An RNA of 177 nucleotides, treated with 2A3 and DMS and read out base by base. For 2A3, 1,682 sequencing reads were counted. 2A3 adducts were read by reverse transcription with SuperScript II with manganese. The RNA was probed in 150 mM KOAc, 10 mM MgCl2 and 150 mM bicine (pH 8.5) at 24 C.
[RMDB]
RNA sequence: GGGAACGACUCGAGUAGAGUCGAAAAUAACAUCACACGCAGUGUCUAGUUUAAGUGCUCCUACAUUAGUACCGCAGGAGAAUUAUACUAGCAUUCGUUUUGCUAGUGUUUAUAGUGUGCCUGAGACGGAGCAUGUAUGUUUCGACAUACAUGCUCCAAAAGAAACAACAACAACAAC
Reactivity to 2A3 in 0.01 (KOAc 150mM, MgCl2 10mM, bicine 150mM(pH8.5), 24C), signal-to-noise 2, nucleotides 027 to 126: u050a010a010c030a010u060c030a010c000a000c030g110c070a000g000u000g030u060c020u030a010g010u020u040u040a110a060g040u110g090c010u020c000c000u020a020c000a030u090u090a060g080u080a060c010c110g030c030a000g010g000a010g000a020a000u010u000a020u000a010c010u000a010g010c010a010u030u030c000g040u030u070u160u030g040c040u040a040g000u020g020u020u090u000a100u030a060g140u150g020u040g080c000c010u090g000a060g000a030c080
Reactivity to DMS in 0.01 (KOAc 150mM, MgCl2 10mM, bicine 150mM(pH8.5), 24C), signal-to-noise 4, nucleotides 027 to 126: u010a040a060c060a080u000c070a050c300a060c090g010c140a090g020u010g000u000c010u000a050g010u000u000u000a030a040g000u000g010c020u000c010c010u000a030c030a030u000u000a140g000u010a090c300c030g000c020a000g000g010a030g000a070a070u000u000a020u010a010c000u000a010g000c000a010u010u010c160g010u000u000u000u010g040c100u000a050g000u000g020u000u000u020a060u010a110g000u010g010u010g010c020c010u000g020a130g010a170c210